An RNA of 177 nucleotides, treated with 2A3 and DMS and read out base by base. It was measured as part of the RMDB library OK2TST. For DMS the reverse transcriptase was MarathonRT.
RNA sequence: GGGAACGACUCGAGUAGAGUCGAAAAUACGUACUAUGCCAAAUGAAUCACGUGUUAAACAAUGGGUGAUCGAUACACUUAAUGAUAUAAUGACGAAGGAACACGAUGUUUCUGUAAGCGUUGGCAACAUCAUCGGGCGAUUCGUCGCCCGAUGAUGAAAAGAAACAACAACAACAAC
Reactivity to 2A3 in 0.01 (KOAc 150mM, MgCl2 10mM, bicine 150mM(pH8.5), 24C), signal-to-noise 2, nucleotides 027 to 126: u080a000c030g150u020a030c050u110a010u150g000c000c000a010a100a050u140g030a020a030u040c010a000c020g020u060g040u050u100a070a210a060c090a100a030u070g010g000g020u030g020a100u150c030g070a010u110a230c000a010c020u040u110a100a020u200g100a060u040a000u080a210a210u190g070a050c030g050a180a000g140g040a000a000c010a000c010g200a190u140g020u000u000u000c020u070g060u030a050a000g040c050g080u040u060g000g030c010a010a020
Reactivity to DMS in 0.01 (KOAc 150mM, MgCl2 10mM, bicine 150mM(pH8.5), 24C), signal-to-noise 1, nucleotides 027 to 126: u000a060c170g060u000a060c100u000a050u010g000c010c010a050a200a080u000g000a090a020u000c000a030c000g050u000g000u000u000a120a170a020c070a050a080u020g000g000g000u000g010a070u000c290g000a090u010a040c070a070c050u000u000a080a080u000g000a140u010a040u000a030a070u040g020a120c120g010a130a050g000g010a090a020c010a060c090g000a100u000g020u000u000u000c000u010g000u000a040a090g000c120g060u000u000g000g010c050a090a220
Conditions: 150 mM KOAc, 10 mM MgCl2 and 150 mM bicine (pH 8.5), 24 C.